An RNA of 177 nucleotides, treated with 2A3 and DMS and read out base by base.
Reactivities are rounded to 0.1 and cut off at 0 and 3.
In probing experiments dimethyl sulfate is read out at A N1 and C N3, which are open when not base-paired.
2A3 adducts were read by reverse transcription with SuperScript II with manganese.
Conditions: 150 mM KOAc, 10 mM MgCl2 and 150 mM bicine (pH 8.5), 24 C.
RNA sequence: GGGAACGACUCGAGUAGAGUCGAAAACUAUGGGUGACAUAGAUCGUGCUGAUGAUGAUCCUGAGACUGAGCUCAAAAAGGCCUUAGAUGGCAGCAUACAAAAGAGUGAUGAGAGAAGUAGAUAUCAGUGGAAGAACUUAUUCGUAAGUUCUUCCACAAAAGAAACAACAACAACAAC
Reactivity to 2A3 in 0.01 (KOAc 150mM, MgCl2 10mM, bicine 150mM(pH8.5), 24C), signal-to-noise 3, nucleotides 027 to 126: c020u020a080u100g000g000g080u150g060a000c010a040u090a050g070a090u060c060g030u080g040c070u050g010a060u020g000a060u070g020a020u030c020c000u060g010a040g010a030c020u080g050a010g090c000u040c080a070a080a000a040a080g070g000c000c020u100u070a090g010a210u120g040g000c010a010g040c000a050u130a170c070a010a150a010a020g040a030g060u040g020a080u080g000a020g010a000g020a210a000g020u120a020g020a060u080a040u150c060a030
Reactivity to DMS in 0.01 (KOAc 150mM, MgCl2 10mM, bicine 150mM(pH8.5), 24C), signal-to-noise 4, nucleotides 027 to 126: c020u000a050u000g000g020g080u000g010a130c050a040u000a090g010a090u010c110g020u000g030c030u000g010a070u000g020a090u000g010a080u010c010c030u000g010a110g010a080c050u020g000a120g000c060u010c100a040a080a100a140a100g010g030c020c030u000u000a090g000a100u000g000g010c030a050g000c070a020u000a080c130a050a070a040a060g000a060g020u000g010a100u010g000a110g020a060g010a080a070g020u010a040g010a100u000a030u010c100a140